Conditions: 150 mM KOAc, 10 mM MgCl2 and 150 mM bicine (pH 8.5), 24 C.
The record gives the reactivity of an RNA of 177 nucleotides to 2A3 and DMS.
High DMS reactivity at an A or C suggests that its Watson-Crick edge is free.
The DMS profile rests on 1,862 reads.
RNA sequence: GGGAACGACUCGAGUAGAGUCGAAAAGAUAUGGAGCGAUCCAACUGGGAGGGAAGAGCAUCGGAAACGAUGUGGUCCCGAGGAUCAGUUGGAGUCGCUCCUAAGUCAAAGCAUGGUUCGCCAUGCAGAUCCACUCAUUCUUCGGAAUGAGUGGAUCAAAAGAAACAACAACAACAAC
Reactivity to 2A3 in 0.01 (KOAc 150mM, MgCl2 10mM, bicine 150mM(pH8.5), 24C), signal-to-noise 1, nucleotides 027 to 126: g030a010u110a060u240g000g010a010g000c000g000a000u020c010c020a010a000c020u020g000g010g000a020g010g080g030a070a060g160a100g200c030a010u010c000g000g060a030a140a000c010g000a010u000g030u060g020g110u010c000c000c000g150a300g000g010a010u030c000a000g010u000u010g000g010a040g070u020c000g010c010u010c000c000u000a000a000g010u000c030a120a010a040g000c000a000u000g000g080u080u140c240g040c120c000a000u020g030c020a000
Reactivity to DMS in 0.01 (KOAc 150mM, MgCl2 10mM, bicine 150mM(pH8.5), 24C), signal-to-noise 2, nucleotides 027 to 126: g020a040u010a300u000g000g000a000g010c010g010a090u000c000c000a010a010c020u000g000g000g040a030g000g020g000a010a060g010a290g000c000a000u000c000g010g000a070a180a250c000g010a000u000g000u000g000g000u000c000c000c010g010a110g010g000a020u010c010a000g000u020u010g020g010a010g000u000c000g020c000u000c000c000u000a000a090g010u000c030a100a090a160g000c010a010u000g000g000u010u020c300g000c010c010a000u000g010c000a070